RNA sequence: GGGAACGACUCGAGUAGAGUCGAAAAUGUCGUCCAAUAAGUCUACACUGUCAAUUGGAACUGACAGUUAUUCCUCAGUGGUUUCUAACAUAUAGAAGGAGGCUGCCUGCUGACCAACUUCAGGAUCAAGGUAACCAAGGUUCGCCUUGGUUACCUUAAAAGAAACAACAACAACAAC
Reactivity to 2A3 in 0.01 (KOAc 150mM, MgCl2 10mM, bicine 150mM(pH8.5), 24C), signal-to-noise 1, nucleotides 027 to 126: u030g030u010c010g000u020c010c010a030a010u090a100a030g040u000c020u090a100c170a090c190u080g020u100c050a050a000u030u050g020g000a040a090c100u120g010a000c000a040g000u030u080a050u040u020c000c010u060c030a050g060u090g040g000u000u070u000c010u040a090a060c010a100u250a010u160a300g010a000a020g040g000a020g000g000c000u050g060c000c110u030g000c010u020g070a110c000c010a030a050c060u050u080c040a020g070g010a020u130c070
Reactivity to DMS in 0.01 (KOAc 150mM, MgCl2 10mM, bicine 150mM(pH8.5), 24C), signal-to-noise 2, nucleotides 027 to 126: u000g000u000c050g040u000c000c020a000a030u000a100a070g000u000c120u000a070c230a100c070u010g000u020c100a040a060u000u000g000g010a050a080c110u030g000a000c010a020g000u000u010a210u000u000c020c000u000c100a080g000u000g020g020u000u000u020c020u000a090a140c070a110u010a080u000a090g020a020a150g010g010a300g000g030c050u010g000c000c010u000g000c110u000g020a050c010c050a010a210c030u000u000c090a080g000g000a150u000c080